Structure probing data (2A3 and DMS) for a 177-nucleotide construct. 2A3 adducts were read by reverse transcription with SuperScript II with manganese. High DMS reactivity at an A or C suggests that its Watson-Crick edge is free.
[RMDB]
RNA sequence: GGGAACGACUCGAGUAGAGUCGAAAACUAGGUUCAGAGAUUGUGCGGCUCUAGGGACGCUGGCUCACAUCACGUCCUUUACUGGGUUAAGUCUAAAGGAAGUGCUGGAUUGGGUAUUUACCGAUAAAGCCGUCAUAUGUUUCGACAUAUGACGGCUAAAAGAAACAACAACAACAAC
Reactivity to 2A3 in 0.01 (KOAc 150mM, MgCl2 10mM, bicine 150mM(pH8.5), 24C), signal-to-noise 1, nucleotides 027 to 126: c000u010a030g000g040u110u140c000a000g010a030g000a230u150u000g140u090g060c020g000g020c000u000c030u100a010g010g000g000a020c000g000c030u020g040g040c050u040c080a010c000a080u020c030a020c020g020u000c020c010u040u000u000a060c000u150g160g070g000u070u130a170a060g060u000c060u110a050a080a020g040g000a000a060g090u000g000c000u000g000g030a030u120u060g070g000g000u020a130u020u290u020a060c020c030g040a090u280a030a090
Reactivity to DMS in 0.01 (KOAc 150mM, MgCl2 10mM, bicine 150mM(pH8.5), 24C), signal-to-noise 1, nucleotides 027 to 126: c050u000a020g010g010u050u030c080a070g010a090g000a090u050u000g000u010g000c050g010g000c040u000c090u010a080g000g000g000a040c060g000c140u000g040g000c030u030c090a040c100a060u020c020a010c060g040u000c000c000u000u000u000a010c090u000g000g000g000u010u070a060a080g000u040c090u000a050a050a090g050g010a040a060g070u000g000c030u000g030g000a110u000u040g000g010g030u000a010u000u020u000a130c000c030g000a030u010a100a110
Notes
The DMS profile rests on 1,913 reads. The reactions ran in a buffer of 150 mM KOAc, 10 mM MgCl2 and 150 mM bicine (pH 8.5), at 24 C. It was measured as part of the RMDB library OK1LIB.